The data come from the RNA Mapping Database (RMDB), library TTRDES. The record gives the reactivity of an RNA of 177 nucleotides to DMS and 2A3. The DMS profile rests on 3,194 reads. The 2A3 profile rests on 5,593 reads. Conditions: 150 mM KOAc, 10 mM MgCl2 and 150 mM bicine (pH 8.5), 24 C.
[RMDB]
RNA sequence: GGGAACGACUCGAGUAGAGUCGAAAAGAUAUGGAGACCGAGUGUGUUGACGGACACAUGUCGGAAACGACAUGAAUGUCCGAAGGCACCGGUCUCCUAAGUCAAAAGAGCAACUUCGGUUGCUCAACAUUAACCCAGUCUUCGGACUGGGUUAAUGAAAAGAAACAACAACAACAAC
Reactivity to DMS in 0.01 (KOAc 150mM, MgCl2 10mM, bicine 150mM(pH8.5), 24C), signal-to-noise 3, nucleotides 027 to 126: g010a040u000a300u010g000g010a000g030a010c000c000g000a230g040u000g030u000g000u000u000g020a300c090g010g000a020c000a090c000a000u000g010u000c000g000g000a040a040a110c000g010a020c000a020u000g000a100a120u000g010u010c010c000g020a050a090g010g010c000a010c000c010g000g000u000c010u010c000c000u010a000a060g020u000c020a160a070a110a130g000a030g020c010a010a020c000u000u020c170g000g000u000u000g020c010u000c000a060a120
Reactivity to 2A3 in 0.01 (KOAc 150mM, MgCl2 10mM, bicine 150mM(pH8.5), 24C), signal-to-noise 3, nucleotides 027 to 126: g020a000u020a000u080g010g000a010g000a000c010c020g070a300g140u110g010u010g080u240u300g220a230c300g000g000a000c000a000c000a010u010g000u020c010g000g000a010a020a010c020g000a000c000a000u060g110a300a210u100g020u010c010c020g010a030a030g080g010c020a000c000c010g010g000u000c000u000c000c000u000a000a000g000u000c000a000a000a080a180g000a010g000c010a010a010c020u150u170c300g170g000u010u000g010c000u000c000a010a010